[RMDB]
RNA sequence: GGGAACGACUCGAGUAGAGUCGAAAAGUUAUGGAAAACGUCUUAGCUACCACUACAACAACAAUGCUGGACGGUGAUGGUUCGACUUACUCGAAACCAUCACGUAGUGGUUGUCGUUCCCAUUCAAGUUCAAAUAAGAUUUCGAUCUUAUUUGAACAAAAGAAACAACAACAACAAC
Reactivity to DMS in 0.01 (KOAc 150mM, MgCl2 10mM, bicine 150mM(pH8.5), 24C), signal-to-noise 8, nucleotides 027 to 126: g000u000u000a070u020g020g010a100a060a110a160c060g000u000c010u000u010a060g020c010u000a090c100c070a040c110u000a060c120a070a070c140a060a070c160a070a090u000g020c020u000g010g000a030c060g010g010u010g000a030u010g000g010u000u000c000g020a030c120u000u000a050c100u000c000g010a150a040a050c120c030a010u000c040a030c080g020u010a040g020u000g000g010u000u000g010u000c000g010u000u000c010c000c000a120u010u000c120a080a180
Reactivity to 2A3 in 0.01 (KOAc 150mM, MgCl2 10mM, bicine 150mM(pH8.5), 24C), signal-to-noise 9, nucleotides 027 to 126: g020u050u060a060u230g130g060a080a080a020a050c020g030u020c030u150u220a040g010c020u050a040c010c070a060c090u170a040c040a180a000c010a050a010c020a090a180u180g030c020u040g030g030a030c060g020g040u030g020a030u050g010g070u020u010c000g000a010c030u050u070a030c020u030c010g010a050a020a020c010c000a010u040c010a010c080g060u120a050g010u010g010g000u010u050g000u000c000g000u000u000c000c010c000a000u040u060c020a020a010